[RMDB]
RNA sequence: GGGAACGACUCGAGUAGAGUCGAAAAGUAAAGGUUCGCCUUUACAAAAACCGUAGGACUUGAAAGACAGCGAAGAACUGGUGCCGAGGUUCGAAAGAGUACAGCACCAGGGAGCUGGGGAGAGUCCUAAACGGAAAAAGAAUGGUUCGCCAUUCAAAGGUACUAUCAUAUUCGUAUGAUAGUACCUAAAAGAAACAACAACAACAAC
Reactivity to 2A3 in 0.01 (KOAc 150mM, MgCl2 10mM, bicine 150mM(pH8.5), 24C), signal-to-noise 5, nucleotides 027 to 156: g000u010a010a000a000g010g030u030u140c220g130c010c020u000u010u020a040c030a020a100a000a030a020c010c000g010u020a020g000g000a000c010u030u040g100a150a100a030g170a100c000a010g000c020g160a270a020g010a080a030c000u000g010g000u000g000c010c000g120a160g050g020u010u000c010g050a070a050a050g000a010g000u070a000c000a010g010c000a000c000c010a010g000g000g010a010g000c000u000g020g000g040g030a210g000a000g010u000c010c000u000a000a010a010c000g010g080a090a060a010a030a050g010a000a010u020g010g050u060u100c230g030c140c010a010u020u020c000a130a020
Reactivity to DMS in 0.01 (KOAc 150mM, MgCl2 10mM, bicine 150mM(pH8.5), 24C), signal-to-noise 3, nucleotides 027 to 156: g020u000a020a000a040g010g010u010u020c300g030c010c000u000u000u000a020c010a060a050a100a090a110c010c000g020u000a020g000g000a020c000u000u000g000a250a220a160g010a160c010a020g060c010g010a160a190g020a110a220c000u000g010g020u000g010c000c000g020a300g010g020u000u000c020g000a140a100a260g010a050g030u000a060c030a010g010c000a020c020c000a000g000g000g010a180g020c010u000g000g010g010g010a300g000a030g000u000c000c000u010a000a010a090c050g020g000a040a110a070a130a060g010a020a040u010g010g010u000u000c150g020c000c000a020u000u000c010a010a220